Conditions: 150 mM KOAc, 10 mM MgCl2 and 150 mM bicine (pH 8.5), 24 C. An RNA of 177 nucleotides, treated with 2A3 and DMS and read out base by base.

RNA sequence: GGGAACGACUCGAGUAGAGUCGAAAAGAACUCACCAGCAAAUGUUUACGACAAGAUUCGACAUUUGCAAAUUACGUUGCGAUCUUCCAGAAUCUUGUCGAAACGUUCCCAAUCGCUACGCCCUAAAUCAACAAAACAUCUUCGGAUGUUUUGUUGAAAAAGAAACAACAACAACAAC
Reactivity to 2A3 in 0.01 (KOAc 150mM, MgCl2 10mM, bicine 150mM(pH8.5), 24C), signal-to-noise 2, nucleotides 027 to 126: g060a040a020c000u010c060a070c010c020a010g050c040a110a090a090u250g020u010u040u060a150c010g000a020c000a000a000g020a020u000u030c000g010a000c020a100u060u040u090g010c000a020a000a010u140u110a080c180g010u000u020g010c000g000a000u010c090u200u030c160c030a020g000a000a020u000c000u000u020g000u010c000g000a000a000a000c010g030u000u010c020c000c000a010a040u030c030g040c030u010a030c010g040c010c030c000u100a110a130a040
Reactivity to DMS in 0.01 (KOAc 150mM, MgCl2 10mM, bicine 150mM(pH8.5), 24C), signal-to-noise 2, nucleotides 027 to 126: g020a080a170c070u000c040a090c100c030a110g000c070a110a060a060u020g000u000u000u010a120c010g000a020c000a020a010g010a020u000u000c000g000a070c300a040u000u000u000g040c030a000a030a080u000u010a120c270g010u000u000g000c020g000a040u000c070u000u010c110c120a190g020a000a000u000c000u000u000g020u000c000g000a000a040a050c020g010u000u000c010c000c000a070a050u020c090g010c040u000a050c090g010c020c020c000u000a050a100a100
For DMS the reverse transcriptase was MarathonRT. For 2A3 the reverse transcriptase was SuperScript II with manganese.